Annotation
The record gives the reactivity of an RNA of 177 nucleotides to DMS and 2A3. The DMS profile rests on 1,654 reads. In probing experiments dimethyl sulfate is read out at A N1 and C N3, which are open when not base-paired. The 2A3 profile rests on 4,510 reads. Source: RMDB library TTRDEL, as collected in RNAgym.
RNA sequence: GGGAACGACUCGAGUAGAGUCGAAAAGAUAUGGAUGAACUACCCACCAGUACCAGCAUCGAUCUCGGAAACGAGGGAGCUGAAGUACUGAGGUUCAUCCUAAGUCAAAGCAGCCUUCGGGCUGCAACCUAGACACUCUGUUCGCAGAGUGUCUAGGAAAAGAAACAACAACAACAAC
Reactivity to DMS in 0.01 (KOAc 150mM, MgCl2 10mM, bicine 150mM(pH8.5), 24C), signal-to-noise 3, nucleotides 027 to 126: g000a080u010a190u000g000g000a010u000g000a000a020c020u000a090c060c020c070a300c110c010a020g000u000a000c000c020a000g000c000a300u020c130g010a000u000c000u000c020g000g000a060a060a140c000g000a030g020g010g000a050g010c000u000g010a040a070g020u000a030c000u000g010a050g020g000u000u000c030a000u000c000c000u010a020a050g000u000c080a100a100a160g030c000a010g000c000c030u000u010c230g030g000g010c000u000g000c000a000a030
Reactivity to 2A3 in 0.01 (KOAc 150mM, MgCl2 10mM, bicine 150mM(pH8.5), 24C), signal-to-noise 3, nucleotides 027 to 126: g130a090u300a130u300g000g010a000u010g000a000a000c000u160a250c050c020c020a010c010c010a000g000u000a000c000c000a000g040c020a110u300c100g080a060u030c010u000c010g050g050a130a060a080c030g010a000g010g010g000a020g030c000u020g030a110a010g020u010a010c010u000g010a000g000g000u000u010c000a000u000c000c000u010a090a010g100u120c100a070a090a090g010c010a000g000c000c000u150u190c300g100g000g000c000u020g000c000a000a000